RNA sequence: GGGAACGACUCGAGUAGAGUCGAAAAAAACCUCAUCUUCGAUCUAUGCCAUCCGGGCGUUGAUCAGUGCCUCCAGCACGGGCGUUCGCCCAGAUGAGGAGAGAGUAAAGUCGAAGUUCGCUUCGACGCGUAAUUAGAAGUUCGCUUCUAAUUACGCAAAAGAAACAACAACAACAAC
Reactivity to DMS in 0.01 (KOAc 150mM, MgCl2 10mM, bicine 150mM(pH8.5), 24C), signal-to-noise 8, nucleotides 027 to 126: a050a060a070c010c000u000c010a020u000c000u000u000c150g010a010u000c000u000a030u000g010c030c010a200u010c250c230g010g000g010c010g020u000u000g000a020u000c000a030g010u000g000c010c050u000c070c060a210g000c010a010c020g010g000g010c010g010u010u000c190g000c000c000c010a040g000a010u000g010a030g000g000a060g000a120g010a110g010u010a070a080a140g000u000c000g000a010a010g000u000u010c240g020c010u000u000c000g010a010c000
Reactivity to 2A3 in 0.01 (KOAc 150mM, MgCl2 10mM, bicine 150mM(pH8.5), 24C), signal-to-noise 9, nucleotides 027 to 126: a000a000a010c000c000u000c000a010u010c000u040u050c120g010a010u000c010u060a010u040g010c000c000a120u120c190c130g300g010g000c010g010u000u030g000a010u010c000a000g000u000g000c000c030u070c030c020a000g000c000a000c000g000g000g000c040g140u300u300c200g000c000c000c000a000g000a000u010g010a010g100g000a000g020a000g000a010g030u290a160a180a020g000u010c000g000a000a000g020u040u110c130g050c070u000u000c000g000a000c020